[RMDB]
RNA sequence: GGGAACGACUCGAGUAGAGUCGAAAAAUGACGAGAGGGUAGUAGCGUCUGACUGACUCGCUAACCGGUGGCUCGUGAACCAGAUACAUGACUUCAUUCUCGAACUCGACAAGGUAGACCGUAGCCAGUAGAACAGUGGGUUCGCCCACUGUUCUACAAAAGAAACAACAACAACAAC
Reactivity to DMS in 0.01 (KOAc 150mM, MgCl2 10mM, bicine 150mM(pH8.5), 24C), signal-to-noise 1, nucleotides 027 to 126: a180u000g010a070c030g000a050g000a180g000g000g000u000a060g030u000a040g010c050g040u010c060u010g010a160c070u010g000a100c040u000c060g020c030u000a040a070c020c040g010g030u010g000g010c060u000c050g010u000g010a090a040c080c010a040g010a080u000a080c090a100u010g000a060c000u000u000c090a060u000u010c080u000c020g030a040a110c050u000c020g000a040c100a090a080g000g000u010a040g000a110c070c050g010u000a110g000c080c060a070
Reactivity to 2A3 in 0.01 (KOAc 150mM, MgCl2 10mM, bicine 150mM(pH8.5), 24C), signal-to-noise 1, nucleotides 027 to 126: a000u110g040a040c050g000a000g000a080g090g040g000u050a040g030u050a050g000c060g010u000c040u050g100a110c060u030g030a010c000u000c020g000c010u020a090a060c020c030g000g080u060g020g030c020u000c020g060u000g020a030a030c020c020a040g040a050u110a020c120a090u110g060a060c010u020u010c070a060u180u000c060u020c050g000a060a060c020u030c010g030a020c080a050a100g060g040u010a020g080a050c060c000g020u020a000g060c010c040a020